[RMDB]
RNA sequence: GGGAACGACUCGAGUAGAGUCGAAAAGGCAGCGCUGUUCGGCAACCUGAUAGCUCAGGGGGCCUGUGCUGCUGACGCAGCUGCAUCAUCAGCUGGCCUUCCGCUGUCGCCGCUGUUCUGGUGCGCAGGCUCCCCCAGUGUUCGCACUGGGGGAGCCAAAAGAAACAACAACAACAAC
Reactivity to 2A3 in 0.01 (KOAc 150mM, MgCl2 10mM, bicine 150mM(pH8.5), 24C), signal-to-noise 1, nucleotides 027 to 126: g090g000c020a010g000c000g020c030u150g070u300u290c110g010g000c000a000a000c040c000u040g000a080u210a120g050c040u000c020a000g000g000g000g040g000c000c000u020g000u000g000c010u000g000c010u000g000a020c070g030c010a120g070c010u220g020c010a140u030c020a000u000c020a030g000c000u030g020g020c010c000u130u070c020c030g000c090u060g090u180c100g010c040c020g010c050u000g100u200u000c040u000g050g000u080g010c000g000c010a020
The data come from the RNA Mapping Database (RMDB), library OK1LIB. Structure probing data (2A3) for a 177-nucleotide construct. The RNA was probed in 150 mM KOAc, 10 mM MgCl2 and 150 mM bicine (pH 8.5) at 24 C. For 2A3 the reverse transcriptase was SuperScript II with manganese.